[RMDB]
RNA sequence: GGGAACGACUCGAGUAGAGUCGAAAAGAAAGAAAGAAAGAAAGGUAUGAAGUCCUAUUCACUCGGGAUAGGAUAAACUUCAUAUUGAUCGUGUAUGUGCUAACGCACAUACACGAAUGCGCAUGCAGAACUGCAUGCAUGAACAUAUCGAGUGCAACACUAGUCACGCUUUCGAGCGUGACUAGUGAAAAGAAACAACAACAACAAC
Reactivity to 2A3 in 0.01 (KOAc 150mM, MgCl2 10mM, bicine 150mM(pH8.5), 24C), signal-to-noise 1, nucleotides 027 to 156: g020a010a040a030g050a050a070a000g070a030a050a000g120a000a160a010g010g000u010a010u000g000a000a000g010u000c010c000u000a000u030u030c030a010c030u060c060g020g020g000a000u000a000g010g020a000u070a070a080a000c010u010u000c000a000u010a000u040u010g050a060u010c010g000u010g000u000a000u000g000u000g000c030u070a070a060c220g000c000a000c000a000u000a000c000a000c010g000a030a000u010g010c000g000c010a000u000g000c000a030g040a230a060c170u080g000c010a000u000g000c000a000u170g010a140a010c020a060u140a040u190c050g010a060g000u050g020c080a080a020